Chemical mapping of a 177-nucleotide RNA with DMS.

RNA sequence: GGGAACGACUCGAGUAGAGUCGAAAAGAUAUGGAUCCCGAAGACGCACCUAAAAUACAGGCAAUAUAUCGGAAACGAUAUAUGCAGCCUGUAUUUUAGGUGAACUACGUCUAAGGGAUCCUAAGUCGAAAUAUCACUGGUUCGCCAGUGAUAUUUCAAAAGAAACAACAACAACAAC
Reactivity to DMS in 0.01 (KOAc 150mM, MgCl2 10mM, bicine 150mM(pH8.5), 24C), signal-to-noise 4, nucleotides 027 to 126: g000a110u000a300u000g010g010a010u000c020c000c000g000a300a090g000a030c010g020c000a010c010c000u000a000a020a000a010u010a000c000a020g010g040c000a280a010u000a000u000a000u000c000g000g010a120a110a200c000g000a010u000a000u010a000u000g010c290a130g030c000c000u000g010u020a010u010u010u000u000a000g000g020u000g000a010a080c130u010a300c020g020u000c000u020a060a300g010g000g000a000u000c000c000u010a020a080g020u010c110

Conditions: 150 mM KOAc, 10 mM MgCl2 and 150 mM bicine (pH 8.5), 24 C.
It was measured as part of the RMDB library TTRINS.